[RMDB]
RNA sequence: GGGAACGACUCGAGUAGAGUCGAAAAACGCUUCACAAUGUGCGGCAAAGAAACAUUGUUUAUGCAAAGGCACUUCGCAAAGUGUGCUCAAACAUUGCUUAUUCAAACACGCUUCACAAUGUGCGACAAAACUUCACGGUCUUCGGACCGUGAAGAAGCUGAACAAUUAGUUCGCUAAUUGUUCAGCAAAAGAAACAACAACAACAAC
Reactivity to 2A3 in 0.01 (KOAc 150mM, MgCl2 10mM, bicine 150mM(pH8.5), 24C), signal-to-noise 9, nucleotides 027 to 156: a000c030g000c050u070u040c010a000c000a020a040u020g000u000g010c010g030g010c070a120a080a060g090a030a070a010c020a030u010u020g050u040u040u060a080u090g030c030a030a050a060g050g000c010a010c030u070u100c130g040c210a100a090a060g040u030g030u030g050c020u060c080a080a110a030c030a070u030u070g010c020u130u100a080u120u120c050a020a090a040c080a020c130g010c010u040u050c030a010c020a070a090u080g010u030g030c030g060a050c090a010a090a020a030c000u000u000c000a000c000g000g000u000c000u000u040c060g080g000a000c000c000g000u000g000a000a000g000a000a000
Reactivity to DMS in 0.01 (KOAc 150mM, MgCl2 10mM, bicine 150mM(pH8.5), 24C), signal-to-noise 2, nucleotides 027 to 156: a050c090g030c000u000u000c060a030c020a020a000u020g050u010g010c010g020g000c020a100a070a060g070a090a030a050c000a030u000u000g010u000u000u000a120u010g010c000a100a120a130g010g010c000a020c000u000u000c140g040c200a170a040a080g020u000g040u020g040c010u000c070a080a100a030c040a040u000u010g010c060u000u000a140u000u000c110a090a160a120c040a070c080g000c020u010u000c070a110c090a060a050u010g040u000g020c010g020a090c060a040a030a060a150c000u000u010c000a010c000g010g000u000c000u000u000c300g040g010a000c000c000g060u000g000a000a010g020a050a080